This 177-nucleotide RNA was probed chemically with 2A3 and DMS. The DMS profile rests on 996 reads. Values cover nucleotides 27 to 126.

RNA sequence: GGGAACGACUCGAGUAGAGUCGAAAAAGCUAGGAGACGCUGCGGGAGGUCUAGGUGGUGUCGCUGCCGCUGGAUUAACAGCAUUAGCUAUCGGUGUAUCACCAGUAUAUGCAUUAGUUAUAGCAGCUCGAUUCACGGGGUUCGCCCCGUGAAUCGAAAAAGAAACAACAACAACAAC
Reactivity to 2A3 in 0.01 (KOAc 150mM, MgCl2 10mM, bicine 150mM(pH8.5), 24C), signal-to-noise 1, nucleotides 027 to 126: a000g110c090u090a070g000g000a060g020a000c000g000c020u030g000c050g040g060g070a170g060g000u040c020u060a050g030g020u010g010g000u040g040u100c090g120c010u020g000c050c000g000c030u000g000g010a100u060u150a050a020c000a010g050c000a040u000u060a030g000c040u030a010u130c070g040g000u000g040u010a090u110c100a000c070c000a100g070u070a050u020a020u120g040c080a040u000u120a070g010u010u120a060u090a000g000c070a070g000c040
Reactivity to DMS in 0.01 (KOAc 150mM, MgCl2 10mM, bicine 150mM(pH8.5), 24C), signal-to-noise 1, nucleotides 027 to 126: a060g000c120u000a140g030g000a080g000a020c150g030c040u000g010c040g000g000g020a020g000g050u000c000u000a130g000g010u000g000g030u020g000u020c040g020c070u040g000c020c140g020c030u000g000g040a120u000u080a060a110c200a020g000c000a090u020u040a270g000c030u010a160u050c090g050g000u050g000u000a160u010c040a040c020c020a080g000u000a100u000a000u000g020c000a120u060u000a090g090u000u040a000u000a050g000c000a090g000c020